The record gives the reactivity of an RNA of 207 nucleotides to 2A3. It was measured as part of the RMDB library RNAMAK. The reactions ran in a buffer of 150 mM KOAc, 10 mM MgCl2 and 150 mM bicine (pH 8.5), at 24 C. For 2A3 the reverse transcriptase was SuperScript II with manganese.
[RMDB]
RNA sequence: GGGAACGACUCGAGUAGAGUCGAAAAUGAGCUCUUCGGAGCUCAAAAAAGAUAUGGACCAUCGUACGUCGCGGACCCGUUUGACGUCGGAAACGACCGAGGGUCCGAACUACGAUUGAAAUGGUCCUAAGUCAAAAAACGUAAGUUCGCUUACGAACCCGCAAGUAAGGUUCGCCUUACUUGCGGGAAAAGAAACAACAACAACAAC
Reactivity to 2A3 in 0.01 (KOAc 150mM, MgCl2 10mM, bicine 150mM(pH8.5), 24C), signal-to-noise 1, nucleotides 027 to 156: u060g000a000g020c000u000c020u040u030c270g080g000a010g000c010u000c000a000a000a000a000a000a000g010a010u010a010u030g000g010a010c000c010a050u040c050g010u010a070c070g020u080c180g000c010g130g000a000c000c010c000g050u020u040u290g060a080c040g000u020c010g020g030a040a050a050c020g000a010c030c020g020a130g000g010g000u000c000c010g000a000a000c000u020a000c070g000a010u020u140g010a050a050a000u020g000g020u020c000c000u010a070a010g030u010c000a070a000a050a220a040a040c020g000u000a000a010g040u050u220c250g030c160u010u020a010c020g050a040a120